[RMDB]
RNA sequence: GGGAACGACUCGAGUAGAGUCGAAAAUUCGAGGAUCUCCUCCCUCUCCUUCGAGGACGGGUUCGCGACGGGUUGGCUCAUCCUGAGAUCGGGGAGCCUCGACGAUCUCUUUGAUCUCCUGAAGGAGUUAUCGUAACGUUCGCGUUACGAAAAAGAAACAACAACAACAAC
Reactivity to 2A3 in 0.01 (KOAc 150mM, MgCl2 10mM, bicine 150mM(pH8.5), 24C), signal-to-noise 9, nucleotides 027 to 129: u060u030c010g010a010g020g020a080u040c040u020c060c010u010c010c010c000u030c010u000c010c020u040u060c040g140a040g010g010a010c030g020g010g010u090u190c040g030c040g130a150c110g070g120g030u100u130g040g000c010u010c010a100u060c020c010u070g020a040g010a080u110c050g000g000g000g000a000g000c000c000u010c010g030a040c020g030a050u020c030u010c000u120u040u120g060a060u020c010u020c020c040u050g030a070a050g010g010a010g010u040u070a140
Reactivity to DMS in 0.01 (KOAc 150mM, MgCl2 10mM, bicine 150mM(pH8.5), 24C), signal-to-noise 8, nucleotides 027 to 129: u050u030c050g000a020g010g020a110u040c030u000c080c020u020c010c000c000u010c010u000c030c050u000u040c030g030a050g020g010a040c130g010g000g010u010u020c050g060c020g050a190c130g010g000g040u020u030g010g020c020u020c020a110u030c020c050u000g020a080g000a060u030c030g000g000g000g000a020g000c090c020u000c030g000a110c130g000a070u030c010u000c080u010u010u020g030a070u020c020u020c030c110u000g010a050a020g010g010a050g000u040u000a110
An RNA of 170 nucleotides, treated with 2A3 and DMS and read out base by base. For 2A3 the reverse transcriptase was SuperScript II with manganese. It was measured as part of the RMDB library 15KLIB. Conditions: 150 mM KOAc, 10 mM MgCl2 and 150 mM bicine (pH 8.5), 24 C. Values are in units of 0.01, from 0 to 300, in steps of 10.